[RMDB]
RNA sequence: GGGAACGACUCGAGUAGAGUCGAAAAGCCAGGGCCACACCUGGGGGUGAUUUUAUGCCUCACCUCCAGUAGGCACCUUGGUCUCUUUGGGCUAAUCUCUGGCUCCUCUGCACUAACUCUUGCUCUCAAGAGCAUUCGAUUUCGAUCGAAUGCUCUUAAAAGAAACAACAACAACAAC
Reactivity to DMS in 0.01 (KOAc 150mM, MgCl2 10mM, bicine 150mM(pH8.5), 24C), signal-to-noise 1, nucleotides 027 to 126: g020c020c010a020g030g000g030c050c020a080c120a150c300c000u010g080g010g000g000g000u010g020a030u050u000u050u010a100u080g040c220c190u000c000a010c000c000u050c000c000a020g000u030a050g020g000c050a030c040c000u000u040g020g000u000c030u000c060u000u010u030g010g000g020c020u010a050a120u050c020u010c090u000g020g000c030u000c040c030u000c020u000g000c040a050c070u040a080a110c020u020c010u030u050g000c000u000c030u000c080
Reactivity to 2A3 in 0.01 (KOAc 150mM, MgCl2 10mM, bicine 150mM(pH8.5), 24C), signal-to-noise 5, nucleotides 027 to 126: g010c020c010a000g020g020g000c020c000a080c000a050c050c020u000g000g000g000g010g000u000g000a030u010u120u110u260a190u300g090c010c010u010c000a010c000c000u000c000c000a000g020u020a010g000g010c000a180c020c000u040u090g040g010u030c020u020c000u100u060u040g040g010g000c010u040a030a050u120c060u000c020u070g030g000c020u020c010c020u030c020u030g010c020a030c040u090a130a010c010u090c010u040u080g010c010u030c000u000c030

Conditions: 150 mM KOAc, 10 mM MgCl2 and 150 mM bicine (pH 8.5), 24 C. This 177-nucleotide RNA was probed chemically with DMS and 2A3. 2A3 adducts were read by reverse transcription with SuperScript II with manganese.